This 177-nucleotide RNA was probed chemically with 2A3 and DMS. For DMS the reverse transcriptase was MarathonRT. The RNA was probed in 150 mM KOAc, 10 mM MgCl2 and 150 mM bicine (pH 8.5) at 24 C. For DMS, 826 sequencing reads were counted. For 2A3 the reverse transcriptase was SuperScript II with manganese. It was measured as part of the RMDB library M2PK50.

RNA sequence: GGGAACGACUCGAGUAGAGUCGAAAAGCGGAGAUGUUCGCAUCUCCGCAAAUCCCUGGAUGCAGCGAGUUUAAACGGAUACGUUGGCAAGUAUCCAUCGCAAAAGUAUUAGCUUCGGCUAAUACAAGACACGGAGUGAGUUCGCUCACUCCGUGUCAAAAGAAACAACAACAACAAC
Reactivity to 2A3 in 0.01 (KOAc 150mM, MgCl2 10mM, bicine 150mM(pH8.5), 24C), signal-to-noise 1, nucleotides 027 to 126: g030c010g000g000a000g000a010u000g000u070u120c140g030c100a000u010c000u000c000c000g000c000a010a020a000u010c000c000c000u020g060g010a030u090g050c100a010g000c040g070a000g040u090u170u230a150a100a040c060g010g000a000u060a090c030g030u130u290g210g000c050a110a020g010u000a010u000c000c050a030u060c040g000c030a050a030a000a070g000u010a010u020u000a000g000c000u010u050c270g070g010c010u020a020a000u010a000c010a010a020
Reactivity to DMS in 0.01 (KOAc 150mM, MgCl2 10mM, bicine 150mM(pH8.5), 24C), signal-to-noise 1, nucleotides 027 to 126: g000c000g010g010a000g000a000u000g010u000u010c230g020c030a000u000c000u000c000c020g000c000a030a010a120u000c000c010c000u000g060g020a120u000g000c100a110g030c000g010a000g000u000u000u000a070a100a070c150g010g000a010u000a010c000g030u000u010g000g030c160a120a180g000u000a000u010c000c060a100u000c060g000c040a070a060a120a070g000u010a000u000u000a000g000c000u010u000c210g040g010c000u000a010a000u000a000c010a070a070